[RMDB]
RNA sequence: GGGAACGACUCGAGUAGAGUCGAAAAGUGCAGAGUGAAAUUCAUAGGUGCAUCGCCAAUUUGGCGGAACGACCCGGUACUCCGCGUAGUCGCGCUGUAAACGUUCUGUGUUGGCGUUCAGGCCUCAAGCUCAUACCCACUUCGGUGGGUAUGAGCUAAAAGAAACAACAACAACAAC
Reactivity to DMS in 0.01 (KOAc 150mM, MgCl2 10mM, bicine 150mM(pH8.5), 24C), signal-to-noise 1, nucleotides 027 to 126: g000u000g000c000a040g000a030g040u000g030a140a150a090u030u030c140a040u010a060g000g030u000g030c000a030u000c000g010c010c000a010a100u010u000u000g000g000c000g000g000a000a080c000g000a070c060c050c030g060g000u000a000c130u010c220c110g020c000g050u070a050g030u030c060g000c020g070c140u010g000u000a040a090a190c000g010u000u000c020u010g000u030g000u000u010g000g000c010g000u090u000c080a120g020g000c040c000u020c140a010